RNA sequence: GGGAACGACUCGAGUAGAGUCGAAAACGAGCGGCAGUACCACUGGAGGGAAGCAAUUCAGCACAGUAAGCCGCCCGUGCAGAGGCGAAGCGGAAGACCCAGCUGUUUAAGGAGGACGGAAUAGUGAGGAAGUCUUCAAGUUCGCUUGAAGACUUCCAAAAGAAACAACAACAACAAC
Reactivity to 2A3 in 0.01 (KOAc 150mM, MgCl2 10mM, bicine 150mM(pH8.5), 24C), signal-to-noise 1, nucleotides 027 to 126: c000g000a010g080c000g000g040c000a040g060u040a020c040c060a010c080u010g000g030a040g050g100g040a080a000g080c090a020a020u070u090c000a000g010c120a000c010a030g020u050a000a000g020c030c000g000c000c000c000g000u020g000c010a000g000a010g190g000c010g070a080a000g040c030g060g000a020a020g010a040c000c000c000a000g010c020u060g070u150u050u160a000a010g000g000a000g040g060a010c000g000g000a010a010u040a060g080u060g020a030
Reactivity to DMS in 0.01 (KOAc 150mM, MgCl2 10mM, bicine 150mM(pH8.5), 24C), signal-to-noise 2, nucleotides 027 to 126: c030g010a160g010c030g010g000c030a160g020u050a140c080c190a100c030u000g000g000a190g010g060g000a050a070g000c300a070a090u010u000c000a050g000c130a180c120a020g000u000a110a140g000c020c050g000c020c040c020g040u000g000c090a070g020a070g030g000c010g040a060a070g050c070g010g050a010a060g010a090c020c000c050a170g010c020u000g000u000u010u030a130a130g000g000a140g040g020a080c000g000g020a020a040u000a100g010u020g000a170